Structure probing data (2A3 and DMS) for a 177-nucleotide construct. Reactivities are given for positions 27 through 126. For 2A3, 1,448 sequencing reads were counted.
RNA sequence: GGGAACGACUCGAGUAGAGUCGAAAAGAGCUUCGGCGUCUUUCCAGACGCUCACGACGAUCUUUUCCUUCAAAUUCGACCCAAGUCCGCACUGCUUGCAGUGCAAAUACAAUUGCCAACGGAAGGAGAUAAUCUUGUCGUUCGCGACAAGAUUAUCAAAAGAAACAACAACAACAAC
Reactivity to 2A3 in 0.01 (KOAc 150mM, MgCl2 10mM, bicine 150mM(pH8.5), 24C), signal-to-noise 1, nucleotides 027 to 126: g020a020g000c030u060u040c020g000g020c000g000u000c000u030u230u030c060c000a010g000a010c000g000c020u020c040a090c060g060a000c040g010a030u000c000u000u060u070u030c010c000u030u020c050a090a140a210u070u050c030g060a070c000c020c000a030a020g060u000c030c050g000c000a000c030u000g010c040u060u210g010c000a000g000u000g010c000a010a010a000u110a000c010a010a090u080u070g060c020c040a080a000c060g030g050a040a000g070g050a050
Reactivity to DMS in 0.01 (KOAc 150mM, MgCl2 10mM, bicine 150mM(pH8.5), 24C), signal-to-noise 2, nucleotides 027 to 126: g010a100g000c010u000u000c080g000g000c000g010u000c000u000u000u030c300c300a080g010a090c000g000c010u000c150a300c030g020a010c050g020a040u000c000u000u000u000u000c040c040u030u000c100a040a050a120u000u000c010g030a050c010c020c010a130a100g000u020c050c090g000c070a070c000u000g000c030u040u040g000c020a010g040u000g000c000a030a020a070u000a050c260a140a140u000u010g000c080c110a110a090c040g010g000a060a030g000g020a140